[RMDB]
RNA sequence: GGGAACGACUCGAGUAGAGUCGAAAAAUCACUUGGGAGACACAGGUUACACUGAGCCAAGAUGGUGCUACUGCCCUCCAGCCUGGGUGACAGAGCGAGACCCUGAAAGUCAACAGCUCACACUAACACAAAACAAAUUUUAAAAAUGGGCAGAAGAGAUAGAUAGUUGGUUCGCCAACUAUCUAUCAAAAGAAACAACAACAACAAC
Reactivity to DMS in 0.01 (KOAc 150mM, MgCl2 10mM, bicine 150mM(pH8.5), 24C), signal-to-noise 1, nucleotides 027 to 156: a090u000c050a030c010u010u010g030g040g010a100g050a140c030a110c050a030g020g010u000u000a160c090a090c020u000g000a180g030c010c030a040a070g040a120u000g000g040u000g010c030u000a050c010u000g000c010c010c030u000c030c030a120g000c030c030u000g020g000g010u000g000a110c100a100g010a070g010c030g050a220g040a100c000c000c000u000g010a090a050a110g000u000c010a050a080c090a140g010c030u000c010a170c010a040c020u000a060a030c050a110c060a030a040a040a170c120a080a040a140u000u000u000u000a020a060a040a060a030u000g000g000g030c000a010g010a050a080g010a200
Reactivity to 2A3 in 0.01 (KOAc 150mM, MgCl2 10mM, bicine 150mM(pH8.5), 24C), signal-to-noise 4, nucleotides 027 to 156: a000u050c000a000c010u010u020g020g040g000a140g080a030c060a030c020a080g080g000u140u160a060c150a060c060u030g030a000g020c030c000a030a020g010a120u040g030g030u030g020c040u120a160c000u030g010c010c000c000u020c040c000a040g040c010c020u050g010g060g000u000g030a090c040a140g000a010g020c020g010a000g010a060c000c010c090u140g170a130a070a030g020u020c020a040a050c040a150g020c000u070c040a030c000a010c010u100a200a000c060a010c040a120a170a070a010c060a090a180a100u130u190u140u200a080a110a040a040a040u060g000g020g020c030a000g010a060a010g050a000